[RMDB]
RNA sequence: GGGAACGACUCGAGUAGAGUCGAAAACGAUCUGCUGGGACAUCUCAUGCUGGUGGGCCGCAAGGUGGCCAAGGAGCUCGGCCUCGCGGAUGGCUACCGCGUGGUCAUCAACAAUGGCAAGCACGGCUCACUAAUCCGCCUUCGGGCGGAUUAGUGAAAAAGAAACAACAACAACAAC
Reactivity to 2A3 in 0.01 (KOAc 150mM, MgCl2 10mM, bicine 150mM(pH8.5), 24C), signal-to-noise 2, nucleotides 027 to 126: c060g050a090u070c020u110g010c000u030g010g020g080a050c010a070u000c010u000c000a000u070g000c020u010g000g060u050g000g010g050c000c000g000c030a000a130g090g000u030g050g000c000c000a010a070g120g000a030g030c100u110c140g070g000c050c000u000c000g120c000g070g020a100u040g040g020c040u060a000c000c000g020c000g000u010g010g030u000c000a030u090c000a000a060c020a060a070u100g040g000c030a070a010g070c040a000c180g000g030c020
Reactivity to DMS in 0.01 (KOAc 150mM, MgCl2 10mM, bicine 150mM(pH8.5), 24C), signal-to-noise 1, nucleotides 027 to 126: c110g000a030u000c120u000g020c010u000g010g000g040a100c170a030u000c020u000c020a020u020g040c080u000g030g000u000g020g000g060c040c010g000c050a040a250g010g010u040g000g010c040c000a100a210g020g020a190g010c060u000c080g030g000c040c000u000c040g000c050g000g000a090u000g000g000c030u040a030c010c040g000c230g000u000g000g000u040c000a030u040c130a090a040c060a060a090u010g000g000c020a100a100g000c140a170c050g000g000c050

Source: RMDB library OK1LIB, as collected in RNAgym. Chemical mapping of a 177-nucleotide RNA with 2A3 and DMS. Values cover nucleotides 27 to 126. For DMS, 1,712 sequencing reads were counted. For 2A3 the reverse transcriptase was SuperScript II with manganese. The RNA was probed in 150 mM KOAc, 10 mM MgCl2 and 150 mM bicine (pH 8.5) at 24 C.